Conditions: 150 mM KOAc, 10 mM MgCl2 and 150 mM bicine (pH 8.5), 24 C. The record gives the reactivity of an RNA of 207 nucleotides to 2A3 and DMS. It was measured as part of the RMDB library VIROID. For 2A3, 4,878 sequencing reads were counted.

[RMDB]
RNA sequence: GGGAACGACUCGAGUAGAGUCGAAAAAAGACGGACGACAAGCGGAUCUUGCCACCAGGAUGCCUCCGCUAGUCGAGCGGACUUGGUCUCUUCCGCCCAAAGCCCUUUUUCUUUCAACUGAGCUUGUUCCAACGCGCCCCGCGAGUGCAAUCCCCGGCUCAUACUAUAGGUUCGCCUAUAGUAUGAGAAAAGAAACAACAACAACAAC
Reactivity to 2A3 in 0.01 (KOAc 150mM, MgCl2 10mM, bicine 150mM(pH8.5), 24C), signal-to-noise 4, nucleotides 027 to 156: a000a000g090a020c070g030g020a020c020g000a010c040a060a000g010c030g000g030a050u070c060u100u140g100c060c020a110c010c040a060g060g020a100u130g080c020c040u020c010c000g010c010u030a060g090u080c050g000a010g020c020g010g020a040c010u070u100g070g030u050c020u020c010u110u020c010c000g010c020c010c000a050a050a040g010c020c010c010u000u010u010u060u050c050u040u160u080c050a070a040c030u040g010a010g030c030u050u050g050u090u050c020c010a070a040c040g040c010g020c010c000c030c000g030c030g010a030g040u080g020c020a020a090u040c000c000c000c000g010g000
Reactivity to DMS in 0.01 (KOAc 150mM, MgCl2 10mM, bicine 150mM(pH8.5), 24C), signal-to-noise 2, nucleotides 027 to 156: a050a070g020a080c000g020g000a100c030g030a090c060a120a080g020c060g060g010a080u000c020u000u000g020c100c030a100c100c060a130g000g000a130u000g020c040c110u000c030c000g020c010u010a090g020u000c120g000a150g030c000g020g010a170c030u000u000g000g010u000c040u000c030u000u000c020c020g000c010c010c030a080a080a220g010c000c000c020u000u000u000u000u000c030u000u000u000c020a110a090c080u000g000a060g000c030u000u020g000u000u010c060c010a120a120c070g020c080g020c030c020c000c130g010c090g000a110g030u000g010c050a050a190u000c010c000c000c000g020g020